[RMDB]
RNA sequence: GGGAACGACUCGAGUAGAGUCGAAAAUGCAUGCCGAGGGCGUAGUGGUUCUCGUUAAUCAAAACACUACAAACCUAUUAGUUGCCACAUUGACAACUACUGGAAGUGCAAACGACGAGUUCUUUGACGCUCGUCUUCGUGCUUAAUCGUAGCUAAACCUCAUAUUAACGUUCGCGUUAAUAUGAGGAAAAGAAACAACAACAACAAC
Reactivity to DMS in 0.01 (KOAc 150mM, MgCl2 10mM, bicine 150mM(pH8.5), 24C), signal-to-noise 3, nucleotides 027 to 156: u010g030c080a160u000g010c040c060g000a060g050g000g050c060g040u000a030g020u000g030g010u000u000c040u000c110g020u000u000a080a130u000c100a080a030a070a030c000a050c010u000a050c010a090a070a090c040c010u030a090u000u000a070g040u000u000g000c000c050a130c170a180u000u000g050a090c020a040a010c000u010a020c080u000g040g020a060a040g030u000g020c010a030a060a050c080g030a050c000g030a030g000u000u020c100u010u000u000g040a160c080g030c000u010c000g000u010c000u000u000c060g050u000g000c010u000u000a110a160u000c100g020u000a040g010c010u010a030a130a180
Reactivity to 2A3 in 0.01 (KOAc 150mM, MgCl2 10mM, bicine 150mM(pH8.5), 24C), signal-to-noise 8, nucleotides 027 to 156: u110g020c040a030u130g040c030c010g000a010g000g000g020c030g000u030a010g000u000g040g020u040u020c010u010c020g120u060u100a030a030u060c070a020a040a030a040c010a000c010u030a010c020a040a090a060c030c030u100a090u120u050a070g000u010u020g020c040c010a130c050a220u050u120g040a040c010a030a010c030u030a010c040u060g060g040a050a010g000u010g010c000a040a030a060c090g000a000c000g000a000g010u050u050c080u150u240u260g090a060c100g010c010u000c000g020u000c000u010u020c010g020u010g010c000u020u050a050a060u150c090g080u050a040g020c030u090a070a090a090

Structure probing data (DMS and 2A3) for a 207-nucleotide construct.
2A3 adducts were read by reverse transcription with SuperScript II with manganese.
The DMS profile rests on 4,955 reads.
Source: RMDB library RSTRND, as collected in RNAgym.
For DMS the reverse transcriptase was MarathonRT.